The record gives the reactivity of an RNA of 177 nucleotides to 2A3 and DMS. Values cover nucleotides 27 to 126. The RNA was probed in 150 mM KOAc, 10 mM MgCl2 and 150 mM bicine (pH 8.5) at 24 C.
RNA sequence: GGGAACGACUCGAGUAGAGUCGAAAACAGGAUCACACGGUGGUGGGGCAUAUUUCCACAAAUAUGAAACCCUAGAAUGGCUCAAAUACUCUAGAUUCAUUGGACAUGAUCCAUUGACUGGUUUAAACGUUAGCUGUUGUUUCGACAACAGCUAACGAAAAGAAACAACAACAACAAC
Reactivity to 2A3 in 0.01 (KOAc 150mM, MgCl2 10mM, bicine 150mM(pH8.5), 24C), signal-to-noise 4, nucleotides 027 to 126: c050a050g060g030a030u120c010a010c010a000c080g080g040u030g040g060u030g010g010g030g000c010a020u010a030u060u020u090c120c050a080c040a050a060a030u080a010u060g080a140a110a100c020c000c000u010a010g080a110a030u100g060g020c020u020c070a040a090a110u180a090c030u050c040u050a090g000a270u150u040c030a050u070u080g020g020a030c100a110u250g070a260u040c010c020a020u030u070g020a040c050u020g090g000u050u090u140a080a060a020
Reactivity to DMS in 0.01 (KOAc 150mM, MgCl2 10mM, bicine 150mM(pH8.5), 24C), signal-to-noise 2, nucleotides 027 to 126: c160a130g020g020a010u000c000a090c070a070c040g000g000u000g000g060u000g000g070g000g000c000a060u000a020u010u010u010c100c120a150c170a060a020a010u020a010u000g000a070a250a030c000c000c000u020a070g000a090a040u020g030g000c050u000c040a050a070a100u010a030c120u020c000u010a060g000a060u000u010c030a010u000u000g000g000a040c080a210u010g000a030u010c010c000a050u000u000g010a020c140u010g000g010u000u000u000a010a140a150